The record gives the reactivity of an RNA of 207 nucleotides to 2A3 and DMS. The RNA was probed in 150 mM KOAc, 10 mM MgCl2 and 150 mM bicine (pH 8.5) at 24 C. The 2A3 profile rests on 2,711 reads. Source: RMDB library M2RFPK, as collected in RNAgym. For DMS, 2,019 sequencing reads were counted.
RNA sequence: GGGAACGACUCGAGUAGAGUCGAAAACGUGUCCGUCGGCGUAGCCGACAACAUGCCCAGGUAGCCCAGACCUUCAAGGCUACGGUGCGUUGCGACGCACGGUCUCAUUCUUCACAACGACGUUCACAAGAUCGGAUCACUUUCGAGUGAUCCGAAAGCUGUUAUUAAUAUUCGUAUUAAUAACAGCAAAAGAAACAACAACAACAAC
Reactivity to 2A3 in 0.01 (KOAc 150mM, MgCl2 10mM, bicine 150mM(pH8.5), 24C), signal-to-noise 4, nucleotides 027 to 156: c040g000u020g000u060c090c060g000u000c010g030g000c230g140u150a080g030c010c000g020a020c000a010a010c000a010u050g040c000c010c000a020g030g000u010a010g020c030c050c150a020g010a010c000c000u000u010c000a000a000g000g010c000u000a000c010g000g000u020g000c000g010u010u080g090c200g110a000c000g020c000a010c010g000g020u010c010u010c000a090u120u060c020u140u130c060a040c030a160a090c100g140a040c070g110u090u110c050a030c020a110a060g060a210u040c010g000g000a000u000c000a000c010u040u090u130c110g060a000g020u000g010a000u010c000c000g000a000a000a000
Reactivity to DMS in 0.01 (KOAc 150mM, MgCl2 10mM, bicine 150mM(pH8.5), 24C), signal-to-noise 1, nucleotides 027 to 156: c060g000u000g010u010c020c090g020u000c000g000g000c040g050u000a150g060c000c020g000a030c000a030a010c060a010u000g000c010c040c070a090g000g020u020a030g090c040c000c210a050g040a110c000c010u000u000c090a040a300g000g000c000u020a020c050g020g070u020g030c030g040u020u000g080c180g020a090c010g060c000a040c000g000g020u020c050u000c190a220u020u010c070u000u000c070a120c070a160a140c040g000a070c070g000u030u000c060a090c050a030a070g040a170u020c000g070g000a020u000c000a020c010u010u010u020c250g030a040g040u000g020a000u000c000c000g000a010a010a090